[RMDB]
RNA sequence: GGGAACGACUCGAGUAGAGUCGAAAAAGGGGGAGCUGCGCUACAUGCACUCGCGUGUGGUGGCCAACUCGGAGGAGAUCGCCUUCUAUGGGGGCCAUGAGGUGGGGCAGGUUGGGGUGCCGGGCACCGCAUAGGAGUAUUUCGAUACUCCUAUGCGAAAAGAAACAACAACAACAAC
Reactivity to DMS in 0.01 (KOAc 150mM, MgCl2 10mM, bicine 150mM(pH8.5), 24C), signal-to-noise 5, nucleotides 027 to 126: a090g000g000g010g000g000a070g010c060u000g020c080g020c030u010a030c040a070u000g010c020a170c210u020c300g020c080g040u010g030u000g010g040u000g010g010c050c080a040a050c030u000c140g000g000a080g000g010a140g010a110u000c170g000c040c030u000u010c070u000a110u000g000g010g000g000g000c050c090a080u010g000a110g010g020u010g010g000g000g000c110a060g010g000u010u010g000g000g000g000u000g000c050c050g020g000g010c060a070c170
Reactivity to 2A3 in 0.01 (KOAc 150mM, MgCl2 10mM, bicine 150mM(pH8.5), 24C), signal-to-noise 4, nucleotides 027 to 126: a000g060g000g010g010g000a040g000c030u040g010c050g000c020u040a010c010a060u050g000c020a030c180u160c130g020c010g000u040g000u020g020g020u030g070g000c030c010a030a050c020u010c030g040g020a040g010g010a070g010a090u140c080g080c010c000u060u040c040u060a160u110g030g000g000g030g000c030c020a060u100g040a050g040g050u150g010g000g000g020c070a050g000g050u140u100g020g010g020g020u060g080c050c000g030g010g010c040a020c020
Chemical mapping of a 177-nucleotide RNA with DMS and 2A3. Values cover nucleotides 27 to 126. The 2A3 profile rests on 6,137 reads. For DMS, 7,017 sequencing reads were counted. The data come from the RNA Mapping Database (RMDB), library OK2TST.